This 177-nucleotide RNA was probed chemically with 2A3 and DMS. For DMS the reverse transcriptase was MarathonRT. For 2A3 the reverse transcriptase was SuperScript II with manganese. For 2A3, 2,225 sequencing reads were counted. Reactivities are given for positions 27 through 126.
[RMDB]
RNA sequence: GGGAACGACUCGAGUAGAGUCGAAAAUGCAAUUAGUUCGCUAAUUGCACAUGUCUAGUCGCUAGAAAACGAUCAAAACUAGCGACUAGACAUUAUUGAUCGGGGGCCUGGCUUUCGAGCCAGGCAAGACCAUAAGAUUCUUCGGAAUCUUAUGGUCAAAAGAAACAACAACAACAAC
Reactivity to 2A3 in 0.01 (KOAc 150mM, MgCl2 10mM, bicine 150mM(pH8.5), 24C), signal-to-noise 2, nucleotides 027 to 126: u040g000c000a000a000u010u020a010g060u020u040c150g000c110u000a010a000u000u000g000c000a020c030a020u010g000u000c000u000a010g000u000c000g010c000u010a020g080a080a180a030a030c140g100a200u190c110a010a120a000a080c000u000a000g010c000g000a000c000u000a000g000a000c000a000u000u020a010u000u070g050a040u200c060g000g000g000g050g020c000c000u000g000g000c000u090u070u080c260g040a000g000c020c010a030g000g000c010a000a000
Reactivity to DMS in 0.01 (KOAc 150mM, MgCl2 10mM, bicine 150mM(pH8.5), 24C), signal-to-noise 3, nucleotides 027 to 126: u000g000c000a010a010u000u000a000g010u000u020c230g020c020u010a010a010u000u000g010c000a040c240a030u010g010u000c000u010a000g000u000c000g030c000u000a000g010a050a050a110a120c150g000a110u010c140a090a080a090a130c000u000a000g010c010g010a010c000u000a000g000a000c000a010u000u000a030u010u010g000a100u000c050g000g000g000g030g000c000c000u010g010g010c000u000u000u020c160g000a040g010c000c010a010g000g030c030a030a030